[RMDB]
RNA sequence: GGGAACGACUCGAGUAGAGUCGAAAAGGCAGGAGGGGGUCAAUGAUGAGCGUGCUGGCGCGGAUGCGGGUUAUGCGCCACCGAGCCUGGCAGGGGCUGGUGUUGCUGGUGCUCGCACUCUUGCUGAUGAUGAAUGUUUGUUCGCAAACAUUCAUCAAAAAGAAACAACAACAACAAC
Reactivity to 2A3 in 0.01 (KOAc 150mM, MgCl2 10mM, bicine 150mM(pH8.5), 24C), signal-to-noise 6, nucleotides 027 to 126: g040g010c050a010g010g050a050g010g040g010g010g010u040c030a040a090u140g100a060u060g030a040g030c030g020u070g020c040u050g040g000c020g000c020g050g020a030u060g000c030g010g010g020u070u120a050u150g010c020g010c020c000a010c010c020g060a010g000c010c020u080g020g060c110a100g040g000g000g000c020u020g010g010u020g000u030u050g000c020u030g020g070u120g010c010u010c000g000c010a010c010u020c000u020u150g030c040u050g010a080
Reactivity to DMS in 0.01 (KOAc 150mM, MgCl2 10mM, bicine 150mM(pH8.5), 24C), signal-to-noise 4, nucleotides 027 to 126: g000g000c040a050g000g020a090g010g010g010g000g010u020c100a070a090u030g010a130u020g000a080g000c060g010u010g000c080u010g030g000c030g010c050g000g000a080u020g010c030g000g010g010u010u010a070u010g000c010g000c080c020a020c020c020g010a050g010c000c010u000g000g000c140a100g000g000g000g000c000u000g000g000u000g000u010u010g010c020u000g000g020u020g000c020u000c030g000c010a040c040u000c030u020u020g020c050u010g000a240